Conditions: 150 mM KOAc, 10 mM MgCl2 and 150 mM bicine (pH 8.5), 24 C. The record gives the reactivity of an RNA of 207 nucleotides to DMS and 2A3. The DMS profile rests on 1,583 reads. DMS adducts were read by reverse transcription with MarathonRT.
RNA sequence: GGGAACGACUCGAGUAGAGUCGAAAAGAACUCAAUCGCACCGGGCAUUACGGGUGGCGAGAUCAUGGACCGUAUCAAACUCGCACUCGGAUUGCAGAUGUUUGGCGGGAUGCGUGUGGACAAAGCAGACGGCACGGCACUCCGGGGCGACAUUCACUGCUACCCUUAUAUUCGUAUAAGGGUAGCAAAAAGAAACAACAACAACAAC
Reactivity to DMS in 0.01 (KOAc 150mM, MgCl2 10mM, bicine 150mM(pH8.5), 24C), signal-to-noise 1, nucleotides 027 to 156: g000a090a120c050u010c040a070a240u000c040g080c000a030c020c010g010g060g120c050a090u000u010a070c000g070g070g000u000g010g030c040g070a000g010a170u020c100a180u000g020g030a140c140c090g000u010a300u000c010a000a060a120c000u010c020g070c050a030c030u000c020g030g010a060u000u010g000c000a120g090a030u010g040u000u000u010g040g010c030g050g000g010a090u000g010c000g020u000g020u030g000g040a260c090a080a060a140g030c040a120g060a150c070g030g000c080a090c060g030g000c020a020c050u000c020c000g090g000g000g010c040g000a100c120a030u010u000c040a090c140
Reactivity to 2A3 in 0.01 (KOAc 150mM, MgCl2 10mM, bicine 150mM(pH8.5), 24C), signal-to-noise 1, nucleotides 027 to 156: g100a030a030c020u010c040a050a000u030c090g010c010a010c000c010g000g000g030c000a000u000u230a080c020g030g000g000u030g100g060c020g000a000g000a000u080c010a050u060g040g030a060c080c010g140u120a100u270c040a020a180a040c000u000c000g000c000a010c020u010c000g040g020a090u050u080g000c070a070g070a280u050g170u100u030u120g040g000c020g050g010g020a050u050g010c000g030u150g010u060g090g040a080c120a120a060a040g040c010a000g050a120c030g060g010c070a020c170g010g000c060a010c020u000c000c000g000g000g000g000c040g040a000c030a050u010u110c020a060c070